The data come from the RNA Mapping Database (RMDB), library OK1LIB.
An RNA of 177 nucleotides, treated with DMS and 2A3 and read out base by base.

RNA sequence: GGGAACGACUCGAGUAGAGUCGAAAACAGUUUACCCACGCUCACGUCAGAGGAGGUGGCGGCAGUGCUGCAGUAUCAGAUGGUGACUAUAACGACGACGCUGCAGGUGUACGUGACAUACACGGCGGCUGCUGGAGCCGUUCGCGGUUCCAGCAGCAAAAGAAACAACAACAACAAC
Reactivity to DMS in 0.01 (KOAc 150mM, MgCl2 10mM, bicine 150mM(pH8.5), 24C), signal-to-noise 3, nucleotides 027 to 126: c050a150g000u000u010u010a100c020c010c010a110c100g000c040u010c070a060c110g010u030c060a100g000a090g000g000a090g040g090u000g000g000c140g040g000c130a060g030u000g000c020u000g050c020a040g010u010a060u010c040a120g000a090u020g000g030u030g000a110c220u050a130u050a130a060c080g010a140c170g000a060c020g020c010u010g000c030a000g000g000u010g030u000a030c050g010u010g020a050c130a160u010a050c090a010c020g000g000c090g000
Reactivity to 2A3 in 0.01 (KOAc 150mM, MgCl2 10mM, bicine 150mM(pH8.5), 24C), signal-to-noise 7, nucleotides 027 to 126: c030a030g010u070u120u150a180c010c010c010a030c060g070c010u040c000a080c020g100u050c070a020g040a120g170g060a060g090g020u020g020g000c010g020g020c070a050g040u030g110c000u020g000c000a020g010u040a050u130c030a020g060a190u160g070g140u110g060a090c070u120a070u120a280a060c090g070a000c010g010a010c030g000c000u010g000c000a030g000g050u050g010u010a080c030g010u000g070a040c030a090u130a030c010a010c020g080g000c010g010
For DMS the reverse transcriptase was MarathonRT.
For 2A3 the reverse transcriptase was SuperScript II with manganese.
DMS (dimethyl sulfate) methylates the pairing face of unpaired adenines and cytosines.